[RMDB]
RNA sequence: GGGAACGACUCGAGUAGAGUCGAAAAGUAACAAUCUUCGGAUUGUUACAUAGCCUCCAGGUGGAAACCAAAACCUUAGAAAGAAAAGAGAAAGAAAUAGAAGUGACUACCUGUUCGCAGGUAGUAAAUCAUGAACAAAAUUCGUUUUGUUCAUGAUAAAAGAAACAACAACAACAAC
Reactivity to 2A3 in 0.01 (KOAc 150mM, MgCl2 10mM, bicine 150mM(pH8.5), 24C), signal-to-noise 5, nucleotides 027 to 126: g000u000a000a000c000a010a000u000c010u050u050c130g050g000a010u000u000g000u000u000a000c000a000u010a010g060c000c020u010c040c030a020g040g000u040g040g070a130a110a110c020c010a040a030a050a070c020c020u100u110a070g100a110a160a010g060a020a090a050a010g050a010g040a020a130a020g050a020a080a030u130a080g120a170a010g080u060g100a010c000u000a000c000c000u000g020u020u050c220g000c070a000g000g000u000a000g000u000a000a010
Reactivity to DMS in 0.01 (KOAc 150mM, MgCl2 10mM, bicine 150mM(pH8.5), 24C), signal-to-noise 7, nucleotides 027 to 126: g000u000a000a000c010a010a000u000c000u000u010c190g030g010a000u000u000g010u000u000a000c000a060u000a110g010c050c010u010c100c080a100g010g030u000g010g000a090a110a130c080c060a070a050a100a090c060c050u000u010a080g000a080a070a110g000a040a030a060a070g000a090g000a050a050a060g000a040a030a050u000a070g000a100a080g010u000g000a050c000u000a010c000c000u010g010u000u010c190g020c010a000g000g000u000a000g010u000a010a060

This 177-nucleotide RNA was probed chemically with 2A3 and DMS. For 2A3 the reverse transcriptase was SuperScript II with manganese. It was measured as part of the RMDB library M2PK50. For 2A3, 9,940 sequencing reads were counted. The reactions ran in a buffer of 150 mM KOAc, 10 mM MgCl2 and 150 mM bicine (pH 8.5), at 24 C. Values cover nucleotides 27 to 126.